Structure probing data (2A3 and DMS) for a 207-nucleotide construct. Conditions: 150 mM KOAc, 10 mM MgCl2 and 150 mM bicine (pH 8.5), 24 C. The data come from the RNA Mapping Database (RMDB), library M2RFPK.

RNA sequence: GGGAACGACUCGAGUAGAGUCGAAAAGGCUGUGUUGUGGCGGGGGCGAAACAGGAUCGACAAGGGUGUAAAGAUCGCUCUUUUACUCGGCAUGAUACCACCGUUAUCGGGCCAACAGAGUAGUUGCUAGGGGAACGGGUGUUCGCACCCGUUCCAAGCUCUGUUUUAUGUUCGCAUAAAACAGAGCAAAAGAAACAACAACAACAAC
Reactivity to 2A3 in 0.01 (KOAc 150mM, MgCl2 10mM, bicine 150mM(pH8.5), 24C), signal-to-noise 2, nucleotides 027 to 156: g060g000c030u000g010u000g030u110u050g040u040g060g000c050g030g010g020g000g040c020g050a060a010a020c040a040g080g020a080u060c040g030a020c070a040a050g030g090g000u060g040u120a080a130a040g040a050u070c030g000c040u030c020u020u100u020u040a090c010u000c030g020g000c010a010u050g020a010u070a060c020c120a070c050c010g020u010u030a040u100c020g000g030g000c010c000a010a010c030a040g010a020g000u060a010g000u050u010g020c040u080a070g000g190g000g010a000a000c000g000g000g000u000g010u010u040c130g010c040a000c000c020c000g000u000u000c000c000a000a010
Reactivity to DMS in 0.01 (KOAc 150mM, MgCl2 10mM, bicine 150mM(pH8.5), 24C), signal-to-noise 1, nucleotides 027 to 156: g010g040c010u000g040u010g000u000u000g000u010g020g040c050g030g010g040g020g000c020g000a070a080a080c030a070g030g000a050u000c020g010a060c070a070a100g020g030g010u000g020u000a080a080a150g000a150u010c030g000c070u000c030u050u000u010u000a070c030u000c020g050g040c040a180u000g020a220u000a100c020c040a110c030c010g010u000u000a080u000c020g070g010g030c000c030a040a080c030a110g010a110g010u000a110g020u000u010g010c000u010a150g040g010g010g010a010a010c000g000g000g000u000g020u000u010c300g070c010a060c000c000c000g050u000u010c020c000a010a180